Source information
Structure probing data (DMS and 2A3) for a 207-nucleotide construct. 2A3 adducts were read by reverse transcription with SuperScript II with manganese. It was measured as part of the RMDB library M2RFPK. The DMS profile rests on 4,289 reads. Values cover nucleotides 27 to 156. The reactions ran in a buffer of 150 mM KOAc, 10 mM MgCl2 and 150 mM bicine (pH 8.5), at 24 C.
RNA sequence: GGGAACGACUCGAGUAGAGUCGAAAAAAGAAAUCAAAAAAGAUUUCUGAGCCAAACACGCUUCACAAUGUGCGGCAAAGAAACAUUGUUUAUGCAAAGGCACUUCGCAAUGUGUGCUCAAACAUUGACUACCGUCCACCGUUCGCGGUGGACGGAACAAUUCAAUUUGGUUCGCCAAAUUGAAUUGAAAAGAAACAACAACAACAAC
Reactivity to DMS in 0.01 (KOAc 150mM, MgCl2 10mM, bicine 150mM(pH8.5), 24C), signal-to-noise 2, nucleotides 027 to 156: a100a000g010a030a010a000u010c010a020a080a120a160a110a250g000a070u000u000u010c000u000g000a300g040c010c010a100a280a090c090a040c020g000c020u000u000c080a140c040a010a010u000g020u000g010c300g010g000c030a050a070a030g020a000a030a040c000a070u000u000g020u000u000u000a040u010g020c010a000a170a110g000g000c010a040c020u010u010c180g050c080a100a100u010g010u000g000u000g030c020u000c040a080a180a040c000a010u000u000g000a190c090u000a130c000c000g000u000c000c000a040c000c010g050u000u000c220g030c040g050g050u010g000g000a000c000g000g000a010a060
Reactivity to 2A3 in 0.01 (KOAc 150mM, MgCl2 10mM, bicine 150mM(pH8.5), 24C), signal-to-noise 4, nucleotides 027 to 156: a000a010g040a040a010a000u060c070a150a070a210a180a070a050g000a010u000u000u000c000u010g010a020g050c000c020a030a110a020c070a010c030g000c010u020u020c010a000c000a010a020u000g010u000g010c010g070g000c070a100a110a010g060a000a030a010c010a010u010u010g050u060u170u120a110u120g040c040a090a070a080g080g000c000a010c020u110u110c130g010c130a080a060u100g020u000g030u020g030c050u100c170a070a070a020c030a020u040u100g040a070c040u080a100c020c000g000u010c010c000a000c010c010g050u060u080c230g010c010g090g000u000g000g000a000c000g000g000a000a000